[RMDB]
RNA sequence: GGGAACGACUCGAGUAGAGUCGAAAACAUCGGAUGGUGAGUCAGCAGAAGAUAUUUUAAAUGUGUUCUUUGAAGAUAAGGAAAUGCGUGACGGUUAUUUCCAACAGUCUAGUAAAGAGACAGUAUCUGCAUAUAAACAAUGCUAUACUUGUCAAAAUCCUGUCCCAAUUUUCGAAUUGGGACAGGAAAAAGAAACAACAACAACAAC
Reactivity to DMS in 0.01 (KOAc 150mM, MgCl2 10mM, bicine 150mM(pH8.5), 24C), signal-to-noise 1, nucleotides 027 to 156: c000a090u000c000g000g030a020u000g000g060u000g010a090g030u000c020a070g020c030a150g010a260a100g020a050u000a000u000u000u000u000a050a100a150u000g020u000g000u010u000c020u000u000u000g020a130a130g000a130u010a030a300g000g010a010a140a100u000g040c000g000u030g000a080c220g040g000u030u000a030u000u000u000c020c020a070a130c100a090g020u000c040u000a080g010u010a030a080a230g000a160g000a060c020a020g000u000a010u000c150u000g000c010a000u000a220u000a070a140a160c220a070a020u010g000c050u000a040u000a040c020u020u000g030u010c010a020a030a030a240
Reactivity to 2A3 in 0.01 (KOAc 150mM, MgCl2 10mM, bicine 150mM(pH8.5), 24C), signal-to-noise 1, nucleotides 027 to 156: c000a010u150c020g000g000a010u030g050g020u040g000a010g050u030c070a020g000c000a000g000a060a000g020a090u060a080u090u280u090u230a030a180a110u070g010u000g000u040u040c030u040u020u030g050a050a040g020a100u070a060a090g000g020a000a030a000u030g000c040g040u100g130a030c060g000g030u130u000a030u020u050u050c000c000a020a040c020a120g040u030c090u080a070g040u140a180a080a160g050a020g000a020c020a010g000u000a000u000c080u140g030c000a000u010a020u070a180a020a010c060a080a000u000g000c040u000a000u000a050c010u100u150g000u000c000a000a050a050a050